[RMDB]
RNA sequence: GGGAACGACUCGAGUAGAGUCGAAAACAUGGCCAGGGCUGCCUGCACCCCUUCCAGUCACAGAGACCCCUUAAAUUCAGCCCACAAGCCUUGAAGGGUGCAUGUACCUUUUUGGGUCACCAUGGUGCAAGGUAACGUGGAAAUACAGAAGCAUCAACGUGCGAUAGUGAUUCGUCACUAUCGCACGAAAAGAAACAACAACAACAAC
Reactivity to 2A3 in 0.01 (KOAc 150mM, MgCl2 10mM, bicine 150mM(pH8.5), 24C), signal-to-noise 1, nucleotides 027 to 156: c080a060u060g000g000c010c000a030g000g080g000c100u030g010c070c050u000g000c000a070c030c030c010c060u000u070c010c050a040g000u000c040a020c040a100g130a080g020a150c020c020c000c000u010u090a030a030a040u190u080c020a040g040c000c060c000a010c000a000a040g050c000c000u030u030g000a000a010g040g000g010u000g040c000a090u050g020u010a000c000c010u100u060u050u300u260g090g050g020u100c010a020c070c000a070u200g000g000u020g010c000a010a040g030g000u010a010a000c080g000u040g020g000a020a180a000u150a010c060a020g140a140a000g060c030a020u190c040a060a010

Chemical mapping of a 207-nucleotide RNA with 2A3. The RNA was probed in 150 mM KOAc, 10 mM MgCl2 and 150 mM bicine (pH 8.5) at 24 C. The 2A3 profile rests on 517 reads. Values cover nucleotides 27 to 156.